[RMDB]
RNA sequence: GGGAACGACUCGAGUAGAGUCGAAAACGAGGGCGACGUCGGUCACCUUUGCGGCCAACUCAGCGUUGUAGCUCUGCAUCGCUUGGCAGCCGACUAGGAGCGUCUUGACUUCAAGCACGUCUACGUCAGGUCUGUUGACCUUCGGGUCAACAGACCUAAAAGAAACAACAACAACAAC
Reactivity to 2A3 in 0.01 (KOAc 150mM, MgCl2 10mM, bicine 150mM(pH8.5), 24C), signal-to-noise 2, nucleotides 027 to 126: c010g020a120g020g040g060c020g020a100c040g030u100c070g020g010u060c080a110c000c020u040u110u120g020c000g000g000c040c000a140a190c100u120c040a030g100c000g080u000u000g080u260a050g020c010u050c130u280g000c000a030u040c000g000c020u010u000g000g000c000a000g000c000c020g030a090c010u040a060g020g040a050g000c000g030u040c000u000u100g120a170c030u020u100c160a170a050g030c090a000c100g000u030c090u090a050c010g030u080c100